[RMDB]
RNA sequence: GGGAACGACUCGAGUAGAGUCGAAAAACAUCGGCUGGCCUGGUACCGGGCACCUUGGUAUCAGGCGAGACAAUAGGAUGCUGGCAACCUGUAUAGCGUGCUGCUGCGCGAUACGGGAAGUGAGACUCAAAUCAGACGGCUAAGCAUGUAGAACUACGUAUGUACCGAUGUUCGCAUCGGUACAUACAAAAGAAACAACAACAACAAC
Reactivity to 2A3 in 0.01 (KOAc 150mM, MgCl2 10mM, bicine 150mM(pH8.5), 24C), signal-to-noise 2, nucleotides 027 to 156: a010c020a020u090c070g050g000c030u090g030g000c000c010u000g000g000u010a030c010c000g000g040g070c110a130c030c000u050u260g030g000u000a000u020c000a050g000g000c010g000a000g000a000c040a000a040u080a100g060g000a060u050g000c010u020g050g000c050a000a030c000c000u000g010u010a030u010a010g040c020g030u010g030c150u090g040c070u130g010c020g000c000g000a000u010a000c000g000g000g000a020a090g060u050g020a010g050a040c010u010c120a000a040a120u020c040a050g020a110c020g040g010c030u040a080a030g060c000a050u110g040u140a050g000a100a020c050u070a040c120
Reactivity to DMS in 0.01 (KOAc 150mM, MgCl2 10mM, bicine 150mM(pH8.5), 24C), signal-to-noise 1, nucleotides 027 to 156: a150c040a060u000c030g020g000c000u000g010g020c020c000u000g020g000u000a020c020c000g030g000g000c190a050c020c020u030u000g060g030u030a000u010c060a000g060g010c000g000a030g020a020c070a060a100u000a220g010g010a130u000g090c000u030g000g060c000a060a220c030c000u020g050u000a020u000a060g020c000g060u000g000c120u020g050c200u000g000c000g000c030g030a040u010a020c010g000g030g000a080a130g000u020g060a190g000a110c090u010c140a060a050a090u010c050a130g030a100c080g020g000c030u000a060a060g040c060a040u000g010u020a110g010a090a130c040u000a100c200